[RMDB]
RNA sequence: GGGAACGACUCGAGUAGAGUCGAAAAGAUAUGGAGACACGUCGCAUACGGGAGCGAUGAAAUACGUAACAUCUAUUCGGAAACGAAUAGUGGUAUGGAGCUCAGUAUGCGACGUGUCUCCUAAGUCGCUAUAAAGCACGUUCGCGUGCUUUAUAGCAAAAGAAACAACAACAACAAC
Reactivity to DMS in 0.01 (KOAc 150mM, MgCl2 10mM, bicine 150mM(pH8.5), 24C), signal-to-noise 1, nucleotides 027 to 126: g040a090u020a300u000g000g030a030g020a040c000a020c000g000u000c000g000c000a050u000a000c000g000g050g030a020g000c000g000a150u030g000a110a120a020u000a040c000g010u000a040a030c160a010u010c000u000a000u000u000c010g000g000a130a090a210c010g000a000a000u000a010g040u000g030g010u000a000u010g000g000a070g000c000u010c010a210g000u010a000u000g020c000g000a000c000g000u000g000u010c000u000c010c000u000a010a080g020u000c080
The record gives the reactivity of an RNA of 177 nucleotides to DMS. For DMS the reverse transcriptase was MarathonRT.